[RMDB]
Chemical mapping of a 177-nucleotide RNA with DMS and 2A3. The DMS profile rests on 7,592 reads. It was measured as part of the RMDB library OK2TRN. DMS (dimethyl sulfate) methylates the pairing face of unpaired adenines and cytosines. For 2A3, 5,119 sequencing reads were counted.
RNA sequence: GGGAACGACUCGAGUAGAGUCGAAAAAGGGAUCUGUUUGAGAGGAAAGCCACGAAAACCAUGAAAGAGAUCUUUGCGGACGUGACCAGACACAGAUACGGAGACGACGCCCACCUGGACGUCGUCGUAUCUAUGCGGGAUUCGUCCCGCAUAGAUAAAAAGAAACAACAACAACAAC
Reactivity to DMS in 0.01 (KOAc 150mM, MgCl2 10mM, bicine 150mM(pH8.5), 24C), signal-to-noise 7, nucleotides 027 to 126: a100g000g000g000a040u000c020u000g010u000u000u000g000a140g010a120g000g010a070a090a070g010c030c020a040c060g000a050a060a100a090c060c030a070u000g010a070a060a070g010a110g010a030u000c040u000u000u000g020c040g010g010a080c050g020u010g010a130c020c020a080g000a140c110a060c110a040g000a060u010a040c100g010g010a240g010a010c000g000a000c020g010c010c000c020a260c250c220u020g020g020a010c000g000u000c000g020u000c010g010
Reactivity to 2A3 in 0.01 (KOAc 150mM, MgCl2 10mM, bicine 150mM(pH8.5), 24C), signal-to-noise 3, nucleotides 027 to 126: a000g100g000g000a050u040c030u060g080u090u120u130g140a130g010a040g030g060a110a020a010g040c030c000a020c030g020a040a060a020a060c030c020a040u140g100a050a090a010g080a010g010a010u060c000u020u030u070g030c010g010g020a030c020g030u010g010a010c010c030a000g030a050c040a010c010a070g030a030u080a080c030g110g030a110g000a070c010g000a010c000g000c000c000c020a220c020c110u130g000g000a020c000g000u000c000g000u000c000g000